[RMDB]
RNA sequence: GGGAACGACUCGAGUAGAGUCGAAAACUUAUUGAUAGCGAUUUUUAUGAUGAAUAGUUGGAGCGGUAUUCAGAGCGGGCAUAACGCAUUUCGUCCAGUCUCAAAAUCAAAACCAGCAUCGAGUGAGCCAAUCUGACCUUUUCGAAGGUCAGAUUGGAAAAGAAACAACAACAACAAC
Reactivity to 2A3 in 0.01 (KOAc 150mM, MgCl2 10mM, bicine 150mM(pH8.5), 24C), signal-to-noise 4, nucleotides 027 to 126: c010u060u010a050u130u210g030a050u140a040g000c000g010a040u010u010u030u050u080a070u110g090a020u010g020a020a060u050a100g090u040u050g010g000a010g080c020g010g000u080a070u010u110c060a020g000a000g130c010g040g010g000c060a060u110a180a010c040g030c040a040u040u060u060c010g010u000c000c020a000g080u000c030u000c050a080a090a020a020u080c030a010a030a030a060c030c000a040g040c020a030u080c030g040a040g070u110g020a000g020
Reactivity to DMS in 0.01 (KOAc 150mM, MgCl2 10mM, bicine 150mM(pH8.5), 24C), signal-to-noise 2, nucleotides 027 to 126: c030u010u040a100u050u050g000a030u000a030g010c070g020a050u000u000u010u000u010a010u010g000a050u020g020a070a050u000a020g020u000u000g000g000a060g030c030g000g000u000a040u030u080c120a090g020a150g020c130g000g000g020c100a120u010a030a090c170g000c070a110u000u050u030c060g000u000c030c020a100g000u000c060u030c060a060a040a070a040u040c090a050a060a020a110c080c030a140g000c030a020u000c000g000a060g010u020g000a080g000

This 177-nucleotide RNA was probed chemically with 2A3 and DMS. Source: RMDB libraries RFM100 and RFMREP, as collected in RNAgym. For 2A3, 2,170 sequencing reads were counted. 2A3 is a SHAPE reagent: it acylates the 2'-hydroxyl of flexible nucleotides of all four kinds.